[RMDB]
RNA sequence: GGGAACGACUCGAGUAGAGUCGAAAAGAGGUGGGAGGAUCACUUGAGCCUGGGAGGUCAAGGCUAUAGUGAGCCAUGAUCGUACUGCUGCACUCCAGCCUGGGCCAUAGAGCAAGACGCUAUCUCAGUACGUACCAAAGUUCGCUUUGGUACGUACAAAAGAAACAACAACAACAAC
Reactivity to 2A3 in 0.01 (KOAc 150mM, MgCl2 10mM, bicine 150mM(pH8.5), 24C), signal-to-noise 3, nucleotides 027 to 126: g050a050g030g040u060g050g040g020a080g040g020a060u040c020a020c090u040u070g030a020g010c030c010u010g030g020g040a060g000g010u050c030a030a020g010g000c000u040a040u090a120g170u110g080a000g010c000c010a050u070g030a070u070c040g010u050a040c040u030g010c000u060g070c020a040c090u050c030c010a020g010c000c010u030g010g040g000c020c010a060u080a050g040a020g010c020a000a030g030a040c030g010c040u060a050u100c020u000c020a010
Reactivity to DMS in 0.01 (KOAc 150mM, MgCl2 10mM, bicine 150mM(pH8.5), 24C), signal-to-noise 4, nucleotides 027 to 126: g000a090g020g030u010g000g010g000a070g000g020a080u000c080a050c070u010u010g010a120g000c050c040u000g020g010g020a120g000g020u010c060a060a030g010g010c010u000a120u000a060g010u000g010a060g030c000c070a180u020g010a040u000c070g000u000a100c100u000g000c070u000g010c080a050c070u000c080c030a060g010c020c010u000g010g000g010c020c030a030u000a070g000a090g020c070a070a060g040a080c110g010c050u000a060u000c020u000c050a230

Description: The record gives the reactivity of an RNA of 177 nucleotides to 2A3 and DMS. DMS adducts were read by reverse transcription with MarathonRT. It was measured as part of the RMDB library OK2TRN. Reactivities are given for positions 27 through 126. For DMS, 4,560 sequencing reads were counted. Conditions: 150 mM KOAc, 10 mM MgCl2 and 150 mM bicine (pH 8.5), 24 C.